[RMDB]
An RNA of 170 nucleotides, treated with DMS and 2A3 and read out base by base.
The data come from the RNA Mapping Database (RMDB), library 15KLIB.
Conditions: 150 mM KOAc, 10 mM MgCl2 and 150 mM bicine (pH 8.5), 24 C.
2A3 adducts were read by reverse transcription with SuperScript II with manganese.

RNA sequence: GGGAACGACUCGAGUAGAGUCGAAAAGGGCCGGCUGCUCUUCUUUCCCUUCUCUCGUCUUCCUCGGUCAACCUCUUGAGUUCCCCUUCUUCCUCCUCGCUGAGGCGCUUCCCUCCUGCGGAGAGCUAUGCUGACUGCUUCGGCAGUCAGAAAAGAAACAACAACAACAAC
Reactivity to DMS in 0.01 (KOAc 150mM, MgCl2 10mM, bicine 150mM(pH8.5), 24C), signal-to-noise 8, nucleotides 027 to 129: g000g040g050c000c110g070g000c040u050g020c020u000c040u010u020c080u030u020u010c000c000c000u000u000c040u020c020u030c040g000u010c050u020u020c050c000u020c050g000g000u020c090a090a170c050c020u000c020u000u030g020a170g030u010u000c020c000c020c030u050u000c030u000u030c030c010u010c020c010u020c060g030c060u000g030a160g000g000c040g030c120u010u010c020c010c000u010c030c030u000g030c040g000g000a070g000a060g000c070u040a010u080g020
Reactivity to 2A3 in 0.01 (KOAc 150mM, MgCl2 10mM, bicine 150mM(pH8.5), 24C), signal-to-noise 7, nucleotides 027 to 129: g020g000g010c030c050g090g030c090u120g010c010u000c020u080u040c030u040u050u050c000c000c020u080u030c030u000c020u010c010g040u010c020u100u050c010c000u020c020g020g010u060c030a040a060c020c000u040c000u060u120g030a020g040u030u020c000c000c000c000u020u050c010u000u020c010c010u010c000c000u000c010g020c030u050g020a020g020g000c020g010c020u040u020c000c000c000u030c000c010u020g030c020g000g010a030g010a010g050c020u050a060u220g060